Chemical mapping of a 170-nucleotide RNA with 2A3 and DMS. The RNA was probed in 150 mM KOAc, 10 mM MgCl2 and 150 mM bicine (pH 8.5) at 24 C. For DMS the reverse transcriptase was MarathonRT. Reactivities are given for positions 27 through 129. For 2A3 the reverse transcriptase was SuperScript II with manganese.
[RMDB]
RNA sequence: GGGAACGACUCGAGUAGAGUCGAAAACGUCCUCCUUCGGAUGCCCAGGUCGGACCGCGAGGAGGUGGAGAUGCCAUGCCGACCCGAAGAGGAAAGAAGAACGCGAGACGCGAACCUGUGAGUGGAACCAGAUGGCACUUCGGUGCCAUCAAAAGAAACAACAACAACAAC
Reactivity to 2A3 in 0.01 (KOAc 150mM, MgCl2 10mM, bicine 150mM(pH8.5), 24C), signal-to-noise 4, nucleotides 027 to 129: c080g100u050c010c010u050c000c030u110u040c040g040g010a070u080g060c000c000c000a040g040g110u100c050g010g000a010c020c030g050c050g030a050g030g000a020g000g010u030g040g000a110g000a020u120g010c010c030a030u050g040c010c020g010a010c000c000c010g010a030a000g010a010g070g000a070a020a000g030a010a040g020a050a000c020g030c040g030a100g000a070c050g040c030g040a010a050c000c030u070g020u030g040a050g030u050g000g030a010a020c040c010a010
Reactivity to DMS in 0.01 (KOAc 150mM, MgCl2 10mM, bicine 150mM(pH8.5), 24C), signal-to-noise 5, nucleotides 027 to 129: c180g060u020c010c020u010c060c130u010u040c050g040g000a070u040g020c100c010c020a170g050g070u040c050g020g020a110c040c090g030c110g010a110g030g000a010g000g030u030g070g000a070g030a070u070g050c110c050a080u070g030c090c010g000a050c000c000c000g000a070a050g020a000g010g010a040a010a050g020a030a030g060a100a100c140g000c000g040a130g020a100c110g010c090g020a060a080c030c050u020g020u010g000a100g020u020g050g000a100a080c040c080a160